The data come from the RNA Mapping Database (RMDB), library OK3TST. An RNA of 207 nucleotides, treated with DMS and 2A3 and read out base by base.
[RMDB]
RNA sequence: GGGAACGACUCGAGUAGAGUCGAAAAGUGUACAAGUAGGAACAUCAUGACUGCCAUGCUUGGGCCAUUGGUAUAAUUAUUUCUGCUACCUCUGAAGACUGUGGUGAGGGUAGAAUCAGAGUGGUCCCUAGCCAUCGUCCCCCUUUUGAAUUGGUAGCGUAUGUUGGUCUUUCGAGACCAACAUACGAAAAGAAACAACAACAACAAC
Reactivity to DMS in 0.01 (KOAc 150mM, MgCl2 10mM, bicine 150mM(pH8.5), 24C), signal-to-noise 1, nucleotides 027 to 156: g060u000g080u010a050c060a060a080g030u000a090g010g010a030a020c020a070u000c100a130u010g010a090c060u000g030c020c060a110u000g000c030u010u010g020g000g000c030c050a120u000u000g000g000u010a060u000a070a090u000u000a050u000u000u000c000u000g000c010u000a030c010c010u000c030u010g040a110a020g020a060c000u010g080u000g000g030u010g020a100g000g020g050u000a050g000a090a150u040c070a190g010a230g080u000g000g000u000c020c030c040u000a140g100c000c040a040u000c300g000u000c020c000c020c000c090u050u030u000u000g010a050a110u000u030g010g010u000a030g000
Reactivity to 2A3 in 0.01 (KOAc 150mM, MgCl2 10mM, bicine 150mM(pH8.5), 24C), signal-to-noise 2, nucleotides 027 to 156: g080u080g000u070a060c050a010a060g010u040a070g100g010a050a080c030a080u180c010a030u140g110a060c020u090g010c080c040a040u060g020c030u060u040g000g030g060c020c000a050u020u170g050g000u120a100u060a130a090u140u130a060u040u140u030c040u010g030c000u000a060c030c000u000c020u090g040a050a030g010a060c030u070g000u070g040g010u070g050a030g000g020g000u100a050g100a130a010u060c070a000g120a020g170u090g000g080u080c000c000c000u000a000g000c000c000a040u060c030g060u040c030c000c000c000c000u000u100u070u070g050a140a080u010u060g030g000u030a000g010

The DMS profile rests on 2,232 reads. Conditions: 150 mM KOAc, 10 mM MgCl2 and 150 mM bicine (pH 8.5), 24 C. For 2A3, 1,047 sequencing reads were counted.